Overview:
The record gives the reactivity of an RNA of 177 nucleotides to 2A3 and DMS. 2A3 adducts were read by reverse transcription with SuperScript II with manganese. Reactivities are given for positions 27 through 126. The RNA was probed in 150 mM KOAc, 10 mM MgCl2 and 150 mM bicine (pH 8.5) at 24 C. For DMS the reverse transcriptase was MarathonRT.
RNA sequence: GGGAACGACUCGAGUAGAGUCGAAAAGCCAAAGAGGUUCUUAUUCGAUACCAUGGGGAAACUGAUCUGAGAAAUUAUGCAGGCUUCCCCAAGGCACCAAUGUACCCAGACAAAGUGGCAACGCCUCACCGCGAAUAAAAUUCGUUUUAUUCGCGGUAAAAGAAACAACAACAACAAC
Reactivity to 2A3 in 0.01 (KOAc 150mM, MgCl2 10mM, bicine 150mM(pH8.5), 24C), signal-to-noise 3, nucleotides 027 to 126: g030c000c000a040a030a020g130a090g020g000u060u010c020u090u200a180u110u080c040g020a030u050a100c030c010a040u040g000g000g020g020a020a020a020c010u010g020a090u130c040u060g050a050g110a160a200a090u190u120a100u280g040c010a010g090g000c090u000u010c000c000c000c000a000a000g000g000c020a000c000c050a000a000u040g030u060a080c010c010c020a000g020a040c080a060a150a010g110u040g030g000c010a060a040c070g010c010c000u020c030
Reactivity to DMS in 0.01 (KOAc 150mM, MgCl2 10mM, bicine 150mM(pH8.5), 24C), signal-to-noise 4, nucleotides 027 to 126: g020c010c010a060a090a150g010a160g020g000u000u010c050u010u000a060u010u000c070g000a060u010a050c000c020a100u000g010g010g000g000a030a010a040c020u000g000a090u010c080u000g000a070g010a160a090a080u000u000a110u000g010c020a110g000g000c150u000u000c010c000c000c010a000a020g010g010c040a030c040c020a060a050u000g010u000a020c030c010c030a120g010a120c210a050a100a130g010u010g000g020c020a080a100c130g000c030c030u000c200